This 177-nucleotide RNA was probed chemically with DMS.

RNA sequence: GGGAACGACUCGAGUAGAGUCGAAAAGAUAUGGAUCAGGAUAGUCUUGUAACUCAUCGAUAAGCCUCCCUCGGAAACGAGGGAAGGCUUUUGACGAUGGUUACAAGACUAUCCUGAUCCUAAGUCACAAGGUUUAAAUCUUCGGAUUUAAACCUUGAAAAGAAACAACAACAACAAC
Reactivity to DMS in 0.01 (KOAc 150mM, MgCl2 10mM, bicine 150mM(pH8.5), 24C), signal-to-noise 2, nucleotides 027 to 126: g020a040u000a300u010g020g010a010u010c000a010g020g000a010u000a020g010u000c000u010u000g010u000a000a000c000u010c010a000u000c000g030a190u010a010a030g020c000c000u000c000c000c000u000c020g000g000a140a090a250c010g010a010g010g020g010a010a010g040g010c000u000u000u000u000g000a240c110g020a020u000g000g000u000u000a000c010a000a000g000a010c000u000a000u000c000c000u010g000a000u000c000c000u010a010a060g010u000c030a250

Notes: The DMS profile rests on 3,073 reads. For DMS the reverse transcriptase was MarathonRT. The RNA was probed in 150 mM KOAc, 10 mM MgCl2 and 150 mM bicine (pH 8.5) at 24 C.